[RMDB]
RNA sequence: GGGAACGACUCGAGUAGAGUCGAAAACACUCACGAUUCGUCGUGAGUGAAAGAACGCCAAAGUGACCCAAUCUUCCGCGUCAGGAAGGCGAAACGAGGUAAAAACCGGGUCCUUCGGGACCCGGAACAUGUCAUUGACGUUCGCGUCAAUGACAUGAAAAGAAACAACAACAACAAC
Reactivity to DMS in 0.01 (KOAc 150mM, MgCl2 10mM, bicine 150mM(pH8.5), 24C), signal-to-noise 2, nucleotides 027 to 126: c000a010c000u000c000a020c010g000a030u010u010c200g020u000c000g020u000g000a010g010u010g000a030a050a110g000a170a040c090g000c020c020a010a100a170g020u000g000a120c000c020c010a120a080u000c030u000u010c010c040g000c250g030u010c260a110g000g020a050a040g010g000c160g000a060a080a050c120g010a210g010g010u000a080a020a060a110a060c010c000g000g040g030u000c000c020u000u000c180g030g000g000a010c000c000c010g010g000a000a040
Reactivity to 2A3 in 0.01 (KOAc 150mM, MgCl2 10mM, bicine 150mM(pH8.5), 24C), signal-to-noise 1, nucleotides 027 to 126: c000a000c000u010c000a000c000g020a010u070u080c160g030u000c010g010u080g000a000g000u000g010a010a010a010g000a030a030c050g010c070c040a010a080a000g060u040g060a090c000c000c010a000a060u020c030u020u000c030c020g020c070g300u120c030a020g000g030a020a030g030g000c050g000a030a030a020c000g000a050g070g020u050a060a080a000a000a070c000c020g030g000g000u000c020c000u040u110c140g130g000g000a000c000c000c000g000g000a000a000